[RMDB]
Chemical mapping of a 177-nucleotide RNA with 2A3 and DMS. For DMS the reverse transcriptase was MarathonRT. The DMS profile rests on 948 reads. Values cover nucleotides 27 to 126. 2A3 adducts were read by reverse transcription with SuperScript II with manganese. For 2A3, 1,539 sequencing reads were counted.
RNA sequence: GGGAACGACUCGAGUAGAGUCGAAAACACUUGAAUGCUACAAUCACAUGGGUCAAGGCAUACACCAUGCAACAUCAUCUGUCAUGACCUCUUGCAUGGCUGUGUUAACUGAAGAAGUUAUCAUUGCCGCAUCGUGCCGAUUCGUCGGCACGAUGCGAAAAGAAACAACAACAACAAC
Reactivity to 2A3 in 0.01 (KOAc 150mM, MgCl2 10mM, bicine 150mM(pH8.5), 24C), signal-to-noise 2, nucleotides 027 to 126: c050a000c030u050u060g130a130a040u140g020c070u080a030c050a030a050u050c020a040c010a150u090g050g000g000u050c020a020a030g030g000c010a040u090a080c000a020c010c010a030u050g020c020a080a000c010a080u110c000a000u000c040u100g130u120c030a000u020g020a040c020c020u040c040u020u040g050c000a050u040g010g000c030u030g020u000g010u040u020a010a010c000u010g070a110a050g100a100a010g090u010u020a030u090c030a020u000u090g030c000
Reactivity to DMS in 0.01 (KOAc 150mM, MgCl2 10mM, bicine 150mM(pH8.5), 24C), signal-to-noise 1, nucleotides 027 to 126: c070a120c060u000u020g000a090a050u000g030c040u000a040c130a080a140u000c150a090c120a090u000g000g010g000u000c070a130a060g000g000c050a060u000a020c120a050c040c010a020u000g000c020a040a020c170a030u020c040a060u000c150u000g050u030c210a090u000g000a060c010c020u000c080u000u000g020c010a020u000g000g010c020u000g000u000g000u000u000a010a000c030u000g010a020a090g020a100a020g000u000u000a000u010c070a030u000u000g000c070